[RMDB]
RNA sequence: GGGAACGACUCGAGUAGAGUCGAAAACACAGCUUCAGGCCACCAUAAUUUUCCAGGCUUUUUUCUGAGCAGAGUCUGGGGGAGGAUGAAGGGACAGCUUAGCGCAGAGCCUCUACCCACACUUCUGGAGCUCAGGAAGCCACCCUGUCCCCAGAAAACCAUUUACUGCAUUCGUGCAGUAAAUGGUAAAAGAAACAACAACAACAAC
Reactivity to 2A3 in 0.01 (KOAc 150mM, MgCl2 10mM, bicine 150mM(pH8.5), 24C), signal-to-noise 3, nucleotides 027 to 156: c050a000c010a020g060c050u060u050c060a020g040g000c020c010a060c030c010a080u040a180a150u110u170u100u120c070c080a110g010g010c130u050u040u000u000u070u110c020u020g000a010g000c020a010g000a000g020u040c010u030g000g010g010g000g020a010g040g000a040u120g110a080a120g090g020g050a040c060a030g040c020u100u140a040g020c050g000c150a030g000a060g100c010c000u120c010u200a300c030c000c010a000c000a000c040u240u240c020u070g110g120a020g040c010u020c000a000g010g000a020a020g010c000c000a010c010c000c020u030g030u030c000c000c000c000a020g120a030a050a020
Reactivity to DMS in 0.01 (KOAc 150mM, MgCl2 10mM, bicine 150mM(pH8.5), 24C), signal-to-noise 1, nucleotides 027 to 156: c060a090c030a110g040c040u000u000c060a120g040g010c040c030a130c070c010a110u000a090a070u000u030u000u000c010c070a200g000g000c000u000u000u010u060u000u020c060u000g010a090g040c070a180g010a060g010u000c030u000g040g000g000g010g000a030g050g040a220u000g000a090a080g030g020g030a070c060a120g040c000u000u010a090g040c010g040c020a170g020a240g000c020c010u010c040u000a120c010c010c010a040c120a040c040u000u010c140u010g020g000a100g010c030u000c000a100g010g010a020a040g010c060c080a090c180c010c030u000g010u000c020c000c020c010a220g020a040a080a100